This 207-nucleotide RNA was probed chemically with DMS and 2A3. It was measured as part of the RMDB library ARCHII.
[RMDB]
RNA sequence: GGGAACGACUCGAGUAGAGUCGAAAAGGGGUCUCAGAUUCCCGUAAAACACUGAAUUCAAAUAGUCGCAAACGACGAAACUUACGCUUUAGCCGCUUAAGGCUAGCCGUUGCAGCAGUCGGUCAAUGGGCUGUGUGGCGAAAGCCACCGCAACGUCGAUCCUAGUGAUGUUCGCAUCACUAGGAUCAAAAGAAACAACAACAACAAC
Reactivity to DMS in 0.01 (KOAc 150mM, MgCl2 10mM, bicine 150mM(pH8.5), 24C), signal-to-noise 1, nucleotides 027 to 156: g010g000g000g000u000c060u000c060a100g000a260u010u010c030c000c030g000u000a110a060a030a110c050a130c020u000g030a130a080u000u000c050a060a100a240u010a030g010u000c000g000c090a010a100a150c030g000a050c010g020a060a080a020c010u010u000a130c170g010c080u000u000u020a040g070c060c020g010c100u030u010a090a070g030g000c000u000a030g000c090c020g000u010u000g030c000a190g020c030a030g000u000c010g050g050u000c220a120a150u000g020g030g020c020u000g000u010g020u000g000g000c000g010a160a030a250g010c010c000a010c010c160g000c020a030a080c030g010u000c090
Reactivity to 2A3 in 0.01 (KOAc 150mM, MgCl2 10mM, bicine 150mM(pH8.5), 24C), signal-to-noise 5, nucleotides 027 to 156: g010g000g000g000u000c020u010c060a010g010a120u130u060c010c000c010g020u080a030a000a040a010c030a000c020u060g020a100a070u140u080c060a060a080a140u100a070g030u020c040g080c160a080a170a130c090g050a000c000g040a080a020a020c080u140u150a040c060g010c040u110u040u080a000g000c010c010g090c090u170u200a100a020g000g000c000u000a000g000c000c000g000u000u000g010c000a000g000c000a000g000u010c020g090g090u080c060a100a220u190g110g000g000c010u000g000u010g000u000g040g000c010g040a100a030a000g000c000c000a000c000c010g010c000a000a000c010g030u070c070